RNA sequence: GGGAACGACUCGAGUAGAGUCGAAAAACACCGCGUUGGUGCCGGAAUGCCGCAGUACGGCCGCAUAGUCGUGUCCGGGCAGCUCCAGGUGCUGUGGCUCGGCGCCGUGGCCAUACAGCACAGCGGGCGUAUCGAAUUGAUUCGUCAAUUCGAUACGAAAAGAAACAACAACAACAAC
Reactivity to 2A3 in 0.01 (KOAc 150mM, MgCl2 10mM, bicine 150mM(pH8.5), 24C), signal-to-noise 7, nucleotides 027 to 126: a000c050a030c010c000g010c030g080u100u260g040g010u010g010c020c010g020g110a230a090u300g020c000c000g020c000a010g010u030a020c020g040g030c020c010g020c050a180u170a160g080u150c060g030u030g080u140c050c040g040g040g010c030a040g030c020u060c040c050a100g050g090u020g000c010u000g010u030g010g010c000u010c010g010g000c010g000c010c000g000u010g020g000c010c010a080u140a080c090a040g000c030a020c010a050g010c020g010g000g000
Reactivity to DMS in 0.01 (KOAc 150mM, MgCl2 10mM, bicine 150mM(pH8.5), 24C), signal-to-noise 8, nucleotides 027 to 126: a100c080a120c000c010g010c040g000u010u010g020g040u000g010c010c020g000g000a140a060u000g010c020c010g000c020a050g010u000a040c020g000g010c010c030g010c060a140u010a100g010u000c040g010u000g010u010c040c060g000g000g020c050a090g000c070u000c050c090a130g020g020u000g010c000u000g010u000g000g000c010u000c020g010g000c010g010c040c030g020u000g000g010c010c070a150u000a100c160a080g010c010a060c040a300g000c020g010g000g000

An RNA of 177 nucleotides, treated with 2A3 and DMS and read out base by base.